[RMDB]
RNA sequence: GGGAACGACUCGAGUAGAGUCGAAAAGUGGGCAGCUACUAUUGUCAGUGCCAGGCGGGAACCAGUGGCAAGAAUUGCGAGGUCAAUGUGAACGAAUGCCACAGUAAUCCCUGCAACAAUGGUGCCAAAGUUGUUUUGGCUUCGGCCAAAACAACUUAAAAGAAACAACAACAACAAC
Reactivity to DMS in 0.01 (KOAc 150mM, MgCl2 10mM, bicine 150mM(pH8.5), 24C), signal-to-noise 1, nucleotides 027 to 126: g000u010g000g020g000c060a110g030c050u000a120c050u000a060u000u020g000u010c060a080g080u000g000c010c010a090g020g010c070g020g000g000a090a130c030c030a040g090u000g010g070c010a030a110g030a070a030u000u000g010c040g000a170g010g010u030c180a040a050u010g000u010g000a070a120c080g000a300a130u010g000c010c000a010c040a020g010u000a060a110u010c030c000c000u000g000c060a060a060c080a130a090u000g000g000u000g000c010c110a010

Chemical mapping of a 177-nucleotide RNA with DMS. The DMS profile rests on 696 reads. DMS adducts were read by reverse transcription with MarathonRT. Conditions: 150 mM KOAc, 10 mM MgCl2 and 150 mM bicine (pH 8.5), 24 C. It was measured as part of the RMDB library OK2TRN.